RNA sequence: GGGAACGACUCGAGUAGAGUCGAAAACGACGAUCACCUACCAGGGCCGCAAGUUCGAGCUGUCGACCUACGUCGACCCGUACCCCGGCAAGAACGGCCGGGAUCGCAUCUACUACAACGACGUGUGCUGCCGCUGCGGCGGUUCCGGCGUCUACCGGUGGGGAGGGGAAUUCGUUCCCCUCCCCACAAAAGAAACAACAACAACAAC
Reactivity to 2A3 in 0.01 (KOAc 150mM, MgCl2 10mM, bicine 150mM(pH8.5), 24C), signal-to-noise 1, nucleotides 027 to 156: c060g060a030c070g080a090u130c030a080c100c030u090a190c130c140a070g010g000g060c110c000g020c130a090a180g070u040u090c040g020a030g030c110u140g110u120c000g030a050c010c000u000a010c020g070u020c000g000a070c010c000c030g070u090a040c000c020c000c000g010g000c060a180a040g040a170a000c090g140g000c010c010g000g000g000a000u040c010g010c030a120u080c040u210a160c030u040a070c070a150a010c090g140a000c020g160u210g050u030g080c040u080g030c020c040g000c030u090g030c000g040g020c000g010g020u060u030c010c020g000g010c010g000u010c020u030a070c020c040g000